Chemical mapping of a 177-nucleotide RNA with 2A3 and DMS. For DMS, 1,243 sequencing reads were counted.
RNA sequence: GGGAACGACUCGAGUAGAGUCGAAAAUGACGUCGUUUCGACGACGUCAACAUUAAAUCAGCGGUAAAUAAUUAGGAGGCGUUACCGCUGAACGCCUCCAUACGAGAGGGCUAUUCGUAGCCCUCAAACACCUUAGGUCUUUCGAGACCUAAGGUGUAAAAGAAACAACAACAACAAC
Reactivity to 2A3 in 0.01 (KOAc 150mM, MgCl2 10mM, bicine 150mM(pH8.5), 24C), signal-to-noise 2, nucleotides 027 to 126: u080g000a000c010g000u020c020g000u030u090u130c120g060a000c010g040a000c010g000u010c000a000a010c010a000u160u190a010a100a120u040c000a010g000c000g240g100u110a070a110a020u110a030a100u180u210a200g010g000a010g000g000c010g010u000u020a120c010c020g000c000u000g000a000a000c020g010c010c000u000c000c000a050u160a090c170g010a130g000a010g050g000g010c000u000a020u040u050c090g110u050a000g020c010c000c000u010c000a000a000
Reactivity to DMS in 0.01 (KOAc 150mM, MgCl2 10mM, bicine 150mM(pH8.5), 24C), signal-to-noise 1, nucleotides 027 to 126: u000g030a040c010g010u000c000g010u000u000u020c200g000a010c010g000a000c000g030u000c020a040a070c210a090u000u020a030a060a070u000c000a020g020c010g030g000u010a030a050a020u000a030a050u010u030a120g010g000a020g000g010c030g000u000u010a110c040c000g000c000u000g000a020a010c010g010c010c000u000c000c020a070u010a060c300g020a160g000a030g000g010g010c000u000a010u000u020c160g000u000a000g010c000c000c010u020c020a010a060